Structure probing data (DMS) for a 177-nucleotide construct. High DMS reactivity at an A or C suggests that its Watson-Crick edge is free. The reactions ran in a buffer of 150 mM KOAc, 10 mM MgCl2 and 150 mM bicine (pH 8.5), at 24 C. DMS adducts were read by reverse transcription with MarathonRT. For DMS, 475 sequencing reads were counted.
[RMDB]
RNA sequence: GGGAACGACUCGAGUAGAGUCGAAAAGUUGACUUUGGCCUAAAGGUUGUUGCAUAUCUGGAUGUGGAAGACCGAACAAUCAGAUACAAGCAGGUGUGCAUUUCAUAUGGCGAACGGAUACAAAGACAGGUUAGAACCUGUUCGCAGGUUCUAACCUAAAAGAAACAACAACAACAAC
Reactivity to DMS in 0.01 (KOAc 150mM, MgCl2 10mM, bicine 150mM(pH8.5), 24C), signal-to-noise 1, nucleotides 027 to 126: g000u000u000g010a260c090u000u010u000g000g080c050c000u000a140a030a300g000g010u000u000g000u040u000g000c000a080u000a000u000c000u000g000g000a130u000g000u020g000g000a300a090g080a080c120c040g010a030a130c300a090a120u000c030a020g000a300u070a000c070a000a110g000c000a010g010g000u000g040u000g000c040a010u000u000u000c000a070u000a280u000g000g000c000g020a020a020c150g000g000a220u000a060c060a040a050a120g000a230c220